[RMDB]
RNA sequence: GGGAACGACUCGAGUAGAGUCGAAAAACUUCUGGACCGUGGGAGCCAGCAUGAUCAUCUUCCUGGCAGGGAUCACCAACCUCCCCCGAUCCUACUAUGAGGCGGCGGCCAUAGACGGGGCCGGGUGCGUAGUAAUCACAUUCGUGUGAUUACUACGAAAAGAAACAACAACAACAAC
Reactivity to DMS in 0.01 (KOAc 150mM, MgCl2 10mM, bicine 150mM(pH8.5), 24C), signal-to-noise 6, nucleotides 027 to 126: a080c090u000u010c040u010g010g010a070c040c040g020u000g010g020g020a080g000c070c040a090g020c190a080u010g010a050u010c080a070u000c060u000u000c050c010u010g000g010c060a100g000g000g010a050u000c030a090c110c060a100a160c220c020u000c020c000c000c010c000g010a040u000c020c010u000a080c100u000a050u000g010a120g000g010c030g010g000c040g010g010c050c020a080u010a050g010a080c120g010g000g000g020c040c010g010g000g020u000g000
Reactivity to 2A3 in 0.01 (KOAc 150mM, MgCl2 10mM, bicine 150mM(pH8.5), 24C), signal-to-noise 2, nucleotides 027 to 126: a000c030u090u040c020u070g020g000a020c010c020g050u050g010g030g010a050g020c020c010a010g050c070a070u070g040a090u080c020a050u040c070u060u040c020c020u010g030g000c040a030g060g000g030a040u030c040a010c040c020a020a070c010c010u000c000c000c000c000c000g010a020u010c020c000u010a090c030u050a060u100g040a030g010g050c050g020g010c010g020g000c000c000a020u040a020g060a060c070g010g000g000g050c010c010g010g020g010u030g020
Background: This 177-nucleotide RNA was probed chemically with DMS and 2A3. The RNA was probed in 150 mM KOAc, 10 mM MgCl2 and 150 mM bicine (pH 8.5) at 24 C. For DMS the reverse transcriptase was MarathonRT. In probing experiments dimethyl sulfate is read out at A N1 and C N3, which are open when not base-paired.